[RMDB]
RNA sequence: GGGAACGACUCGAGUAGAGUCGAAAACUAGGACUGGCAGAGAAUAAGACAGUGACAGUGUUAGGGGUAGUGGCACUCUCCACGAUAUGUGGGCCCCAUUGUCAACAUUUCUUUUUUUUUUUUUUGAAACAGAGUUUCACUCUUGUCGCCCAGGCUGCAUUGGAAAUGCAUUCGUGCAUUUCCAAUGAAAAGAAACAACAACAACAAC
Reactivity to DMS in 0.01 (KOAc 150mM, MgCl2 10mM, bicine 150mM(pH8.5), 24C), signal-to-noise 1, nucleotides 027 to 156: c020u000a110g030g000a020c030u010g020g030c040a080g000a120g000a110a100u010a070a100g000a080c210a080g020u000g010a060c050a050g030u000g010u000u000a090g020g010g040g000u000a050g040u010g030g030c050a080c080u000c100u020c000c000a030c030g000a170u000a050u000g020u000g000g000g020c010c040c020c020a250u000u000g020u000c010a050a070c070a030u000u000u000c000u000u000u010u000u000u000u010u000u000u000u000u000u130u080g000a090a030a040c030a120g000a110g010u010u000u000c030a040c030u000c000u000u010g030u000c010g050c020c010c030a090g000g000c040u000g010
Reactivity to 2A3 in 0.01 (KOAc 150mM, MgCl2 10mM, bicine 150mM(pH8.5), 24C), signal-to-noise 4, nucleotides 027 to 156: c020u040a060g010g020a010c020u020g030g010c030a010g030a010g030a130a070u130a160a000g030a040c020a060g030u000g030a000c000a030g020u020g050u190u170a070g000g010g020g000u060a080g030u090g060g020c050a060c110u080c010u000c000c010a020c040g050a120u110a070u300g020u040g000g030g010c000c000c000c000a010u050u050g010u030c010a040a040c000a060u030u100u050c030u020u060u030u030u000u000u000u000u000u020u000u070u120u120g040a080a090a000c020a010g070a020g080u010u100u110c010a030c020u020c000u030u050g020u030c020g020c010c020c010a010g040g040c010u050g020
Structure probing data (DMS and 2A3) for a 207-nucleotide construct. For 2A3 the reverse transcriptase was SuperScript II with manganese. The reactions ran in a buffer of 150 mM KOAc, 10 mM MgCl2 and 150 mM bicine (pH 8.5), at 24 C. It was measured as part of the RMDB library OK3TST. For DMS, 4,356 sequencing reads were counted.